[RMDB]
RNA sequence: GGGAACGACUCGAGUAGAGUCGAAAAGUGCCGACGCUCUCGAUCGCGGCCUGGUCGACGAACUCGGCGGCCUUCGAACCGCGGUGCGUCGCGCGAAGGUGCUAGCCGGACUAGAUGAGGACACCGAGGUAUGUUGCAGUUUCGACUGCAACAUACCAAAAGAAACAACAACAACAAC
Reactivity to DMS in 0.01 (KOAc 150mM, MgCl2 10mM, bicine 150mM(pH8.5), 24C), signal-to-noise 2, nucleotides 027 to 126: g040u000g000c070c010g010a090c030g000c040u010c060u000c100g030a040u000c030g020c090g030g010c060c020u000g020g010u000c020g010a040c090g010a160a130c300u000c040g000g000c010g020g000c030c000u010u000c200g000a070a130c120c010g010c030g030g010u020g010c040g040u000c050g030c100g010c000g000a050a110g010g040u000g000c050u010a090g020c050c020g000g000a150c050u000a070g000a100u010g010a150g010g010a130c110a060c020c050g010a170
Reactivity to 2A3 in 0.01 (KOAc 150mM, MgCl2 10mM, bicine 150mM(pH8.5), 24C), signal-to-noise 2, nucleotides 027 to 126: g070u080g060c050c000g020a070c010g020c010u030c000u040c070g110a090u050c000g000c010g050g010c000c010u020g020g010u010c030g000a040c050g040a250a110c100u100c110g000g000c000g000g010c010c000u060u070c060g040a120a080c030c020g000c000g040g030u160g110c040g010u100c020g040c010g020c000g010a030a000g040g030u100g060c040u040a040g050c010c000g080g000a070c030u070a040g000a260u150g070a040g020g040a000c010a010c100c000g020a050